[RMDB]
RNA sequence: GGGAACGACUCGAGUAGAGUCGAAAACGCGCAGGGAUGUGUUCGAAUCUAUGUUUAUGCUCUCCCUUUGACUGAUUCACAGUUACGAGCAUGGAUUCGCAUAGAUAUGCGUCUCAAAGGGAGCGCGGCACGAUUUAAUCUUCGGAUUAAAUCGUGCAAAAGAAACAACAACAACAAC
Reactivity to 2A3 in 0.01 (KOAc 150mM, MgCl2 10mM, bicine 150mM(pH8.5), 24C), signal-to-noise 1, nucleotides 027 to 126: c020g070c000g000c010a060g070g000g080a050u070g030u030g050u070u150c040g020a020a010u000c010u020a050u000g090u010u150u000a090u120g000c040u010c000u020c000c000c000u000u030u010g020a000c020u000g020a180u160u100c130a050c010a220g020u050u160a060c130g010a030g010c060a060u020g000g050a110u080u010c030g000c020a030u000a040g120a010u150a020u150g000c020g040u010c000u000c040a050a020a040g040g050g030a020g000c000g000c000g020
Reactivity to DMS in 0.01 (KOAc 150mM, MgCl2 10mM, bicine 150mM(pH8.5), 24C), signal-to-noise 2, nucleotides 027 to 126: c060g020c020g020c020a120g010g020g000a070u000g000u010g030u000u010c100g010a050a020u010c040u010a020u000g010u000u000u000a050u060g000c050u000c020u000c020c010c000u000u000u000g000a020c080u010g000a190u020u020c250a140c040a030g000u020u000a120c190g000a050g020c040a040u010g000g010a040u000u000c060g000c120a030u010a090g020a090u020a030u000g000c000g020u000c050u000c010a020a060a050g000g000g010a040g010c120g010c030g030